[RMDB]
RNA sequence: GGGAACGACUCGAGUAGAGUCGAAAAAUUGACUCAACAAUUAGAUCAUUGGAGUUAUCGUGCUAUUGGUCUAGGUUUUCUUCUUUUAACUAUAGGUAUUCUUCCUGGAGCAGUAUGGGCUAAUGAAGCAUGGGGAUCUUAUCGGAGCUGGGACCCAGGAUCGAAGAAAAUUCGUUUUCUUCGAUCCAAAAGAAACAACAACAACAAC
Reactivity to 2A3 in 0.01 (KOAc 150mM, MgCl2 10mM, bicine 150mM(pH8.5), 24C), signal-to-noise 2, nucleotides 027 to 156: a000u070u090g010a010c000u010c060a040a050c030a060a160u150u150a090g060a110u150c050a060u040u100g060g020a040g010u020u040a120u130c050g010u060g040c020u120a220u270u010g000g000u020c000u000a000g000g040u050u290u040u000c000u010u030c000u040u080u000u130a130a140c110u060a050u000a040g000g000u020a010u060u000c030u030u040c010c000u010g040g010a000g000c000a000g000u150a070u130g000g010g000c010u000a020a050u070g020a010a000g030c010a020u000g000g040g000g000a010u010c020u020u080a030u150c120g020g020a030g020c040u060g050g000g000a000c000c020c000a000
Reactivity to DMS in 0.01 (KOAc 150mM, MgCl2 10mM, bicine 150mM(pH8.5), 24C), signal-to-noise 1, nucleotides 027 to 156: a150u020u000g010a100c080u000c020a090a050c070a060a150u020u010a130g010a100u010c110a180u000u020g010g010a130g020u010u000a040u020c070g080u000g000c060u000a100u010u000g020g000u000c040u010a070g030g010u010u000u000u000c020u000u000c000u000u020u000u010a030a190c090u010a100u010a020g010g000u000a050u010u000c040u000u000c010c050u010g030g010a020g030c000a040g000u010a060u020g010g010g040c020u030a020a050u010g010a050a050g000c020a040u000g000g020g010g010a110u000c040u000u010a030u000c120g000g000a080g060c030u010g030g010g010a230c010c020c020a300
Background: Structure probing data (2A3 and DMS) for a 207-nucleotide construct. 2A3 adducts were read by reverse transcription with SuperScript II with manganese.